[RMDB]
RNA sequence: GGGAACGACUCGAGUAGAGUCGAAAAUGAGGAAAGAGCUGGCCUCCUCAAGGCCUGGGUGACUCAACUGUCAGCCUCCAAAGCCCAUUCCCCUCCUUCAUUGGAGAGGAGUUUGAGGACAGUUGUGGUUGAACCCCCAGCAAAACUAUUCCAAAACCCAUAGCAGACGAUUCGUCGUCUGCUAUGGAAAAGAAACAACAACAACAAC
Reactivity to 2A3 in 0.01 (KOAc 150mM, MgCl2 10mM, bicine 150mM(pH8.5), 24C), signal-to-noise 1, nucleotides 027 to 156: u050g010a020g000g020a170a020a110g030a060g090c100u010g050g000c000c030u020c000c050u020c030a010a090g050g010c020c060u030g000g000g000u010g000a000c020u010c020a030a010c010u020g000u070c060a050g120c030c020u020c010c020a090a060a100g090c030c000c050a010u040u010c020c000c000c000u020c000c010u140u130c070a190u180u210g000g000a010g000a060g010g010a050g020u000u040u090g100a070g000g030a010c010a020g000u020u000g080u030g050g060u080u100g130a110a130c020c000c000c000c030a010g000c030a020a080a000a240c060u080a140u210u060c030c040a050a160a010a030c030